The record gives the reactivity of an RNA of 177 nucleotides to DMS and 2A3. For DMS the reverse transcriptase was MarathonRT. Values cover nucleotides 27 to 126. The 2A3 profile rests on 2,340 reads.

[RMDB]
RNA sequence: GGGAACGACUCGAGUAGAGUCGAAAAAGGAGAAAAGCAAAGAAAGCAACGGGGCUAGCCAGUGGGUGUUCCGCCUCCCGAGAGGCACGAGUGAGGCUUAUCCCGGGGAACUCGGCGAAUCGUCCCCCAUACAAGUAACCUUCGGGUUACUUGUAUGAAAAGAAACAACAACAACAAC
Reactivity to DMS in 0.01 (KOAc 150mM, MgCl2 10mM, bicine 150mM(pH8.5), 24C), signal-to-noise 3, nucleotides 027 to 126: a060g010g000a110g010a060a070a070a080g030c060a060a080a140g000a070a080a130g010c040a090a080c070g020g000g000g010c090u010a070g020c010c030a120g030u010g010g010g020u000g020u010u000c050c050g000c040c010u000c020c060c090g020a110g020a040g000g010c050a040c090g000a080g010u010g000a090g000g000c030u000u000a100u000c010c010c020g010g010g010g010a080a060c010u010c020g010g010c030g010a020a040u000c020g000u000c010c000c010c010
Reactivity to 2A3 in 0.01 (KOAc 150mM, MgCl2 10mM, bicine 150mM(pH8.5), 24C), signal-to-noise 2, nucleotides 027 to 126: a010g130g020a140g030a070a120a030a030g040c070a160a130a070g060a120a140a010g090c010a020a040c020g030g000g000g000c020u030a010g040c020c010a080g050u200g090g050g010u090g080u070u030c040c040g040c020c010u020c010c010c020g170a180g010a040g090g030c030a000c080g030a070g080u150g020a050g050g000c010u030u040a060u050c000c000c000g000g000g010g040a020a020c000u010c030g030g000c010g020a020a020u030c000g020u010c000c010c030c000